Source: RMDB library RNAMAK, as collected in RNAgym. This 207-nucleotide RNA was probed chemically with 2A3 and DMS. Values are in units of 0.01, from 0 to 300, in steps of 10.
RNA sequence: GGGAACGACUCGAGUAGAGUCGAAAAGUAGUCUUCGGACUACAAAAAAGCGUACUACGAGUACCACGCGCUAACGUUGAAAGAGCUCCCAAAUAGGAGCUCUGGAGUUAGCGAACUACGUGGACUCGUAUCGCAAAAAUCGCCGUUCGCGGCGAAACUAGUAUUAGCGAUUCGUCGCUAAUACUAGAAAAGAAACAACAACAACAAC
Reactivity to 2A3 in 0.01 (KOAc 150mM, MgCl2 10mM, bicine 150mM(pH8.5), 24C), signal-to-noise 3, nucleotides 027 to 156: g010u000a010g000u000c000u010u080c280g040g010a000c000u000a000c000a000a120a040a000a010a020g030c030g020u130a080c070u010a000c020g010a000g000u070a300c000c000a010c000g030c000g000c000u000a000a000c010g170u220u030g050a020a020a010g000a000g000c000u010c030c030c040a160a210a080u260a120g000g000a000g000c000u000c000u000g000g000a050g010u000u010a000g000c000g000a020a030c060u160a080c010g000u000g030g000a010c000u010c000g000u000a000u000c020g030c000a000a040a040a070a000u000c000g000c010c000g020u030u090c240g030c010g130g000c000g000a050a010a000
Reactivity to DMS in 0.01 (KOAc 150mM, MgCl2 10mM, bicine 150mM(pH8.5), 24C), signal-to-noise 1, nucleotides 027 to 156: g000u000a010g010u000c010u050u010c300g000g000a000c010u000a000c010a000a060a140a050a080a090g040c010g000u000a060c170u000a010c030g000a020g010u000a250c010c000a000c000g010c000g010c010u000a020a050c010g030u000u000g010a190a130a060g000a030g040c000u000c000c000c010a040a160a300u010a030g030g010a030g020c010u000c010u000g000g000a130g010u000u000a030g010c000g010a030a160c050u010a040c000g010u000g010g000a090c000u000c000g010u000a000u000c000g030c040a040a050a060a120a050u000c010g020c000c000g050u010u000c260g040c060g030g070c010g010a000a050a090